[RMDB]
RNA sequence: GGGAACGACUCGAGUAGAGUCGAAAAGGCUGCAGGACAUCGCGAUGACAACCUAUUUAAGCAGAGCCGAAGCGUAAGUGUCGAUACCUGAGGCAGAUGCAGCGACUAGCACAGCACUAACUGCCGCUAUUAUUAUGAUAUUCGUAUCAUAAUAAUAAAAAGAAACAACAACAACAAC
Reactivity to 2A3 in 0.01 (KOAc 150mM, MgCl2 10mM, bicine 150mM(pH8.5), 24C), signal-to-noise 9, nucleotides 027 to 126: g040g000c010u020g000c020a010g020g030a030c010a070u040c040g000c030g100a060u100g030a030c030a030a050c020c010u040a100u080u170u040a090a010g010c010a010g010a010g060c000c010g020a030a010g010c020g050u040a060a040g050u050g040u140c030g020a040u040a110c000c010u020g010a030g040g000c010a010g010a120u040g000c000a000g010c000g030a070c030u030a010g010c020a020c030a070g030c010a010c050u070a120a010c010u040g010c000c000g010c020
Reactivity to DMS in 0.01 (KOAc 150mM, MgCl2 10mM, bicine 150mM(pH8.5), 24C), signal-to-noise 9, nucleotides 027 to 126: g000g000c020u000g000c090a060g000g000a080c120a070u010c050g010c040g000a100u020g000a100c120a080a080c120c040u010a080u020u020u020a100a120g010c040a050g000a180g010c010c020g000a150a060g000c150g000u000a040a070g010u010g010u000c040g000a100u010a050c040c010u010g000a200g000g010c010a040g000a140u000g000c010a060g010c040g000a060c080u010a090g010c100a070c090a080g000c080a080c080u020a080a100c030u010g000c010c030g000c100
Structure probing data (2A3 and DMS) for a 177-nucleotide construct. The reactions ran in a buffer of 150 mM KOAc, 10 mM MgCl2 and 150 mM bicine (pH 8.5), at 24 C. Values are in units of 0.01, from 0 to 300, in steps of 10. Source: RMDB library OK1LIB, as collected in RNAgym. For DMS the reverse transcriptase was MarathonRT. For DMS, 73,432 sequencing reads were counted.